This 177-nucleotide RNA was probed chemically with DMS and 2A3. It was measured as part of the RMDB libraries RFM100 and RFMREP.
RNA sequence: GGGAACGACUCGAGUAGAGUCGAAAAGCUUUACCAGAGAGGGUGAUAGUCCCCUGGAAGUAACUAAAGAGGCUACGAGGAAAGAUAUCCUGAGUACCAUGCGUCAUUAUUCGCGUGGGAAUAUGGGCGAAGUGAUAUUAUUCGUAAUAUCACUUCGAAAAGAAACAACAACAACAAC
Reactivity to DMS in 0.01 (KOAc 150mM, MgCl2 10mM, bicine 150mM(pH8.5), 24C), signal-to-noise 9, nucleotides 027 to 126: g010c030u010u000u010a100c020c020a110g000a190g010a090g010g000g020u010g000a140u020a110g010u020c030c000c010c010u000g000g010a090a060g010u010a050a080c130u010a050a100a100g010a090g000g010c040u000a040c060g010a100g010g000a050a060a070g000a100u020a090u010c000c010u000g010a080g000u000a140c000c000a010u000g010c010g010u010c270a120u030u020a140u020u010c010g020c000g030u000g000g000g000a080a080u020a090u010g000g000g010
Reactivity to 2A3 in 0.01 (KOAc 150mM, MgCl2 10mM, bicine 150mM(pH8.5), 24C), signal-to-noise 9, nucleotides 027 to 126: g020c020u060u070u090a100c010c010a010g070a010g050a120g090g030g020u110g090a230u150a110g100u090c000c000c000c000u010g000g010a040a020g030u070a050a040c070u070a120a070a060g100a030g060g000c020u030a030c080g040a040g040g070a110a040a030g070a070u090a060u110c000c000u020g010a010g010u010a010c000c000a000u010g000c000g030u060c090a190u060u300a100u220u110c010g000c000g000u010g000g010g050a010a020u180a090u150g020g020g000
Description:
For 2A3 the reverse transcriptase was SuperScript II with manganese.